This 177-nucleotide RNA was probed chemically with DMS. The reactions ran in a buffer of 150 mM KOAc, 10 mM MgCl2 and 150 mM bicine (pH 8.5), at 24 C. For DMS the reverse transcriptase was MarathonRT.
[RMDB]
RNA sequence: GGGAACGACUCGAGUAGAGUCGAAAAGAUAUGGAGGCAUGGGUAGCAACAGCUGUAAGGGUCGGAAACGACCCAACAGACAUGCUACACAUGCCUCCUAAGUCAAACAGCAUCUUCGGAUGCUGAAUCAAGGCAUUAGCUUCGGCUAAUGCCUUGAAAAAGAAACAACAACAACAAC
Reactivity to DMS in 0.01 (KOAc 150mM, MgCl2 10mM, bicine 150mM(pH8.5), 24C), signal-to-noise 2, nucleotides 027 to 126: g000a120u000a300u030g000g000a010g050g000c000a000u000g020g000g010u010a000g020c010a040a070c290a150g040c000u000g060u020a110a130g000g000g000u000c000g040g010a190a180a210c010g010a010c000c010c000a010a010c000a000g000a070c110a260u020g000c000u000a010c000a010c000a030u000g000c000c010u000c010c000u000a000a120g020u000c040a110a100a260c000a010g000c000a000u000c010u000u040c230g040g030a000u000g010c000u000g010a040a140